Overview: Chemical mapping of a 177-nucleotide RNA with 2A3. Reactivities are given for positions 27 through 126. For 2A3 the reverse transcriptase was SuperScript II with manganese.
RNA sequence: GGGAACGACUCGAGUAGAGUCGAAAAAGACGAACAUGAUGAAAGCAAAAAUUAAAAAGAAUGCGUGAUCAUCAAACAUUAUGUGUUUGAUAUGAUCGAACUUGUCAUGCUACGUUCUUUCUGAUUCGACGACCCUCCAAUUCGUUGGAGGGUCGUCAAAAGAAACAACAACAACAAC
Reactivity to 2A3 in 0.01 (KOAc 150mM, MgCl2 10mM, bicine 150mM(pH8.5), 24C), signal-to-noise 2, nucleotides 027 to 126: a000g020a000c000g020a050a000c000a000u010g000a010u030g000a030a020a050g020c040a020a100a110a020a070u140u130a060a150a090a040a000g290a020a070u040g000c000g060u080g000a000u000c010a000u000c000a000a000a000c010a000u100u150a090u300g230u020g020u000u000u000g150a120u080a200u180g000a000u000c010g000a040a000c000u060u020g010u000c000a000u010g010c010u090a100c020g010u080u000c000u030u070u000c050u040g210a230u060u170c060